An RNA of 207 nucleotides, treated with 2A3 and read out base by base.

RNA sequence: GGGAACGACUCGAGUAGAGUCGAAAAACAUGCUGGCCAACCCAACCCCACGAUCCUCCAUCGGCAUGAUCAUGAUAUGUUCUCAAAUAUCAGGCCAGUAAAUCACCAUGCUCGUGCUGGUAAAGGCAACUUAUGCCCAAGUUCGCUUGGGCAUAAAGUGAUAGAGGCUGUUCGCAGCCUCUAUCACAAAAGAAACAACAACAACAAC
Reactivity to 2A3 in 0.01 (KOAc 150mM, MgCl2 10mM, bicine 150mM(pH8.5), 24C), signal-to-noise 1, nucleotides 027 to 156: a000c030a020u050g000c000u010g000g020c000c010a030a050c150c050c070a050a080c080c010c010c000a070c140g070a090u040c000c000u020c030c030a090u120c010g000g020c010a000u040g020a020u020c020a030u000g010a050u050a010u090g060u060u010c040u000c010a030a020a010u160a100u120c090a030g010g030c000c000a010g000u020a000a020a050u040c020a020c070c010a000u030g000c000u010c000g050u020g000c000u030g040g000u020a150a120a040g000g000c000a030a010c040u040u020a000u000g000c000c030c000a000a010g020u020u020c150g030c140u000u020g060g000g000c000a000u000a000a000a000
It was measured as part of the RMDB library M2RFOK.